RNA sequence: GGGAACGACUCGAGUAGAGUCGAAAAGCAAUCGCGAGGAUGGACAACCCGAAUGCCGUCGCGGUAAUCCACAUUGUGGUGAUGCCGCCAACCGUCGCGAUCAUCAAGCCACCGAUGGCCGGGCCGAAGGCCCCAAAUGAUUCGUCAUUUGGGGCCUAAAAGAAACAACAACAACAAC
Reactivity to DMS in 0.01 (KOAc 150mM, MgCl2 10mM, bicine 150mM(pH8.5), 24C), signal-to-noise 9, nucleotides 027 to 126: g010c110a120a030u000c010g020c010g010a090g010g020a100u000g000g010a080c090a120a140c030c020c020g000a130a120u010g020c020c020g020u000c110g020c010g010g010u010a070a190u000c010c000a010c020a240u010u010g030u000g000g010u000g000a150u000g000c020c010g020c010c140a040a060c080c050g000u000c020g020c010g000a020u000c100a080u000c110a090a130g010c040c030a090c110c060g010a060u010g000g020c030c040g010g000g010c080c080g010a120
Reactivity to 2A3 in 0.01 (KOAc 150mM, MgCl2 10mM, bicine 150mM(pH8.5), 24C), signal-to-noise 3, nucleotides 027 to 126: g030c020a030a040u040c020g000c010g010a020g050g040a070u120g040g030a050c020a040a100c010c000c030g050a060a080u150g010c020c010g030u050c030g000c000g000g000u030a010a060u000c000c000a030c070a240u100u300g000u010g020g000u010g010a040u240g010c000c020g000c020c020a040a030c020c020g110u050c010g000c010g020a000u030c000a060u040c010a020a070g040c020c010a030c000c050g050a040u060g010g020c010c010g010g040g000c030c010g080a020